RNA sequence: GGGAACGACUCGAGUAGAGUCGAAAAGAUAUGGAAGUUCCGAGAAGUGUAGGGUGGCUAAGACAGUUGGUCGGAAACGACCAAUCGAGCCACCCUACAAACUUCGUUUGACGAACUUCCUAAGUCAGAUUGAUCACUAGUUCGCUAGUGAUCAAUCAAAAGAAACAACAACAACAAC
Reactivity to DMS in 0.01 (KOAc 150mM, MgCl2 10mM, bicine 150mM(pH8.5), 24C), signal-to-noise 2, nucleotides 027 to 126: g000a030u000a300u000g010g000a010a010g000u000u000c000c010g020a080g050a020a020g110u000g010u000a000g000g000g020u010g020g030c000u000a230a160g010a190c300a060g040u010u010g000g030u000c000g000g000a120a080a220c000g010a030c000c000a010a020u000c090g030a000g030c020c000a010c010c000c000u000a000c010a020a040a040c010u020u000c000g000u000u020u010g020a160c300g000a000a040c000u010u000c000c000u000a010a040g000u000c060a150